[RMDB]
RNA sequence: GGGAACGACUCGAGUAGAGUCGAAAAGGACGUUCCCCGACGAGGAGGCGGCGGCGCGGGCCUACGACGUGGCGGCGCUCCGGUACCGGGGGCGCGACGCGGCCACCAACUUCCCCGGGGCCGCGGCGGAAUUGGACUUUUUCGAAAGUCCAAUUCCAAAAGAAACAACAACAACAAC
Reactivity to DMS in 0.01 (KOAc 150mM, MgCl2 10mM, bicine 150mM(pH8.5), 24C), signal-to-noise 5, nucleotides 027 to 126: g020g010a140c020g000u000u010c000c000c000c020g030a080c050g010a240g010g010a030g010g020c030g010g010c040g000g010c010g010c020g010g000g020c030c090u000a050c080g010a070c050g020u000g010g000c030g000g000c000g000c010u000c010c000g000g010u020a090c130c030g020g010g010g010g010c020g010c080g010a080c010g020c000g010g010c010c000a090c050c040a090a110c160u010u000c020c000c000c220g000g010g000g000c010c000g030c010g000g020c170
Reactivity to 2A3 in 0.01 (KOAc 150mM, MgCl2 10mM, bicine 150mM(pH8.5), 24C), signal-to-noise 3, nucleotides 027 to 126: g060g040a080c020g010u200u300c020c000c000c010g020a040c010g020a060g100g020a030g080g280c060g030g060c020g020g000c010g010c000g030g040g060c010c040u110a060c070g070a020c020g010u020g040g150c030g000g030c010g000c010u000c000c010g010g060u100a100c050c020g020g000g010g000g000c010g000c020g020a030c010g000c000g030g020c000c010a110c080c000a110a070c070u050u040c000c000c000c000g010g000g000g000c030c000g000c000g000g010c030